[RMDB]
RNA sequence: GGGAACGACUCGAGUAGAGUCGAAAAAGUUGUGGUCAUCACAGAUAUCAUGAAAGGAUUCAGGUUCAUGUGUCUCAACUAUGUGAUAUUUCAUAUCAGGGAAACUGGUAUAUGCAUUUCAGCUGCAGUCCCAAAGCAGAUUCGUCUGCUUUGGGACAAAAGAAACAACAACAACAAC
Reactivity to DMS in 0.01 (KOAc 150mM, MgCl2 10mM, bicine 150mM(pH8.5), 24C), signal-to-noise 1, nucleotides 027 to 126: a160g010u030u000g060u000g000g000u000c110a090u000c090a030c070a030g000a030u000a010u010c040a050u000g010a060a040a060g020g020a110u010u020c180a090g000g020u000u020c060a100u000g030u000g020u000c000u010c060a030a120c180u010a050u000g000u000g000a050u000a100u000u010u000c120a060u010a010u010c020a100g000g000g010a040a080a090c040u010g050g060u000a010u000a120u040g000c060a010u000u000u000c140a100g000c180u000g010c060a100
Background: Structure probing data (DMS) for a 177-nucleotide construct. The RNA was probed in 150 mM KOAc, 10 mM MgCl2 and 150 mM bicine (pH 8.5) at 24 C. The data come from the RNA Mapping Database (RMDB), library OK2TST.